Overview:
Chemical mapping of a 177-nucleotide RNA with 2A3 and DMS. Conditions: 150 mM KOAc, 10 mM MgCl2 and 150 mM bicine (pH 8.5), 24 C.
RNA sequence: GGGAACGACUCGAGUAGAGUCGAAAAACACGUGCUCCAAAAGAGCACAGAGUCGCGCAAAUAUCUGGCUCGACUGAUGCGCGACAAAUCGAGCCAUGAAAAGAAACAAGGAAAACAACAAUAGAAACGUCAUGUAGGUCUUCGGACCUGCAUGACGAAAAGAAACAACAACAACAAC
Reactivity to 2A3 in 0.01 (KOAc 150mM, MgCl2 10mM, bicine 150mM(pH8.5), 24C), signal-to-noise 1, nucleotides 027 to 126: a000c100a000c080g000u000g000c000u000c000c000a050a050a020a000g000a000g000c000a000c000a000g000a020g000u000c010g000c010g000c030a050a050a120u280a160u080c050u080g040g000c000u020c030g100a110c080u110g020a070u090g010c000g000c010g010a000c060a010a110a000u070c020g000a000g010c030c010a040u150g060a010a030a020a020g090a020a040a000c060a030a020g000g120a030a000a010a130c080a050a000c010a070a020u130a190g130a100a080a020
Reactivity to DMS in 0.01 (KOAc 150mM, MgCl2 10mM, bicine 150mM(pH8.5), 24C), signal-to-noise 2, nucleotides 027 to 126: a160c130a260c150g000u000g030c020u050c000c010a040a130a100a300g000a000g000c000a000c000a040g000a280g000u000c000g000c060g000c000a020a160a090u040a190u000c140u000g000g000c000u000c010g060a000c130u040g060a020u020g000c050g040c000g030a120c000a000a130a010u010c110g010a000g030c000c000a000u000g010a010a020a000a100g000a060a170a020c060a020a030g300g000a000a300a080a040c110a030a080c130a000a060u090a090g000a130a030a110
Annotation:
DMS adducts were read by reverse transcription with MarathonRT. Reactivities are given for positions 27 through 126. It was measured as part of the RMDB library OK1LIB.